[RMDB]
RNA sequence: GGGAACGACUCGAGUAGAGUCGAAAAGAUAUGGACAACCUUGAGACUCUGACCCAUAGUCGGAAACGACUAUUGCAGAGUCAAUGAUGGGUUGUCCUAAGUCAAAAUCCUGAGUUCGCUCAGGAAACAGUCCUUGAAACUUCGGUUUCAAGGACUGAAAAGAAACAACAACAACAAC
Reactivity to DMS in 0.01 (KOAc 150mM, MgCl2 10mM, bicine 150mM(pH8.5), 24C), signal-to-noise 1, nucleotides 027 to 126: g010a080u000a300u010g010g010a010c010a000a030c020c000u000u000g000a130g000a000c000u000c000u000g000a060c300c000c070a020u010a020g000u030c000g040g010a110a060a150c000g030a000c000u000a000u000u000g000c000a040g000a000g030u000c000a060a070u000g010a100u000g000g000g010u000u000g000u000c010c000u000a010a130g030u010c050a100a130a140a060u000c000c000u000g000a020g000u000u000c280g000c000u030c000a000g000g000a000a070a180